[RMDB]
RNA sequence: GGGAACGACUCGAGUAGAGUCGAAAAGUGAUCGAAUCAGAUCGGCGGAUGCUAUCCCGGAUGUGGCACAUUCGUUAGCUUAUUAAGUAAAUCAUUAAGGUGACUUAGUGGACAAAGUUAAUAAGAUGAGUGGGUAUAAGUUCGCUUAUACCCACUCAAAAGAAACAACAACAACAAC
Reactivity to 2A3 in 0.01 (KOAc 150mM, MgCl2 10mM, bicine 150mM(pH8.5), 24C), signal-to-noise 1, nucleotides 027 to 126: g110u040g040a000u000c000g010a000a290u140c020a060g010a030u010c000g050g010c000g000g070a040u040g050c020u050a070u150c010c000c080g040g040a260u130g040u140g100g020c070a010c000a010u060u000c010g010u070u110a020g020c000u000u020a000u010u030a040a050g030u090a030a030a080u000c000a010u000u010a010a010g020g020u050g060a060c020u010u000a020g000u020g020g010a020c090a040a130a000g050u010u010a090a030u050a060a020g040a030u090
Reactivity to DMS in 0.01 (KOAc 150mM, MgCl2 10mM, bicine 150mM(pH8.5), 24C), signal-to-noise 1, nucleotides 027 to 126: g000u010g010a020u000c030g010a120a160u010c070a000g000a050u000c030g010g030c030g010g000a010u020g000c120u000a090u000c000c100c010g020g020a050u000g060u030g020g000c300a110c070a060u000u000c050g010u010u010a140g000c010u010u000a040u000u000a030a070g000u010a050a100a050u020c000a000u000u000a010a000g020g000u000g000a140c000u000u000a010g000u000g000g000a060c140a030a160a190g010u000u000a030a010u010a030a010g030a140u010